[RMDB]
RNA sequence: GGGAACGACUCGAGUAGAGUCGAAAACCGUAGGCCUAUUCCUGAUUAUCGGUAUUCUUGGAUUUACUGGCCACUAUGGUUCGAAAGAGCCAUAUGCCAGUUGUCAGAAUACCCAGAUAGGCCUAAACGGAAACGGGCUUAGUUCGCUAAGCCCGAAUCAUUUGAAGCUGUUCGCAGCUUCAAAUGAAAAAGAAACAACAACAACAAC
Reactivity to 2A3 in 0.01 (KOAc 150mM, MgCl2 10mM, bicine 150mM(pH8.5), 24C), signal-to-noise 3, nucleotides 027 to 156: c010c020g000u010a010g000g020c010c000u010a010u110u180c090c030u090g090a230u190u300a210u300c080g000g000u000a000u010u000c020u020u170g130g000a030u190u090u160a020c000u000g000g010c000c000a010c000u000a000u000g010g030u020u000c000g060a140a130a080g000a020g010c010c010a020u030a020u080g000c000c000a010g000u000u010g010u000c000a010g000a000a000u000a000c000c000c000a000g000a010u000a000g000g020c000c000u000a000a000a000c000g010g050a000a100a070c000g000g000g000c000u000u010a030g020u100u090c200g060c190u020a010a000g000c000c000c000g000a000a020
Reactivity to DMS in 0.01 (KOAc 150mM, MgCl2 10mM, bicine 150mM(pH8.5), 24C), signal-to-noise 1, nucleotides 027 to 156: c030c020g020u000a030g000g030c000c000u010a030u020u000c040c110u000g030a300u000u040a080u010c060g080g040u010a010u000u030c000u020u000g010g040a040u000u020u000a020c020u000g020g020c050c090a100c300u000a000u020g020g020u000u000c030g010a180a140a200g000a010g040c000c000a000u000a000u000g030c010c020a030g020u000u000g010u010c020a050g000a080a030u000a010c000c020c040a130g010a020u000a020g000g000c010c010u000a000a040a060c040g030g010a070a090a130c040g000g030g030c010u010u000a010g010u000u010c300g050c000u000a010a050g020c010c010c000g000a020a040